[RMDB]
RNA sequence: GGGAACGACUCGAGUAGAGUCGAAAAGCAUCCCGCUUCGGCGGGAUGCAAAAGCGAUCGUGUCAUUGCCUCGAACGCAACUCAUAUAAUGAUGGGCACUGAAAAGUCUGGGCUUCGGCCCAGACAAGAUGUUACACACGUUCGCGUGUGUAACAUCAAAAGAAACAACAACAACAAC
Reactivity to 2A3 in 0.01 (KOAc 150mM, MgCl2 10mM, bicine 150mM(pH8.5), 24C), signal-to-noise 2, nucleotides 027 to 126: g000c000a010u000c030c000c000g050c000u040u040c100g120g000c000g010g000g010a000u000g010c000a020a000a000a000g010c010g000a030u030c020g020u000g080u130c070a130u070u220g020c000c000u000c000g030a040a010c000g030c040a030a030c000u030c080a080u190a010u060a200a210u140g140a010u090g030g030g000c040a030c070u020g030a050a070a050a090g000u000c000u000g000g000g000c000u030u030c200g100g000c000c000c010a000g000a000c000a000a000
Reactivity to DMS in 0.01 (KOAc 150mM, MgCl2 10mM, bicine 150mM(pH8.5), 24C), signal-to-noise 2, nucleotides 027 to 126: g040c000a030u000c000c000c000g040c020u000u000c260g010g030c000g000g000g030a000u000g020c020a020a030a100a160g000c040g000a030u000c050g030u020g000u010c040a080u000u000g050c040c020u000c050g000a080a120c090g020c000a130a130c090u010c020a040u010a130u010a090a090u000g010a050u010g000g010g000c060a060c070u010g000a070a130a040a070g040u000c000u000g000g000g040c010u000u000c210g050g020c000c000c020a000g010a000c010a010a040

This 177-nucleotide RNA was probed chemically with 2A3 and DMS. For 2A3 the reverse transcriptase was SuperScript II with manganese. The data come from the RNA Mapping Database (RMDB), library M2PK50.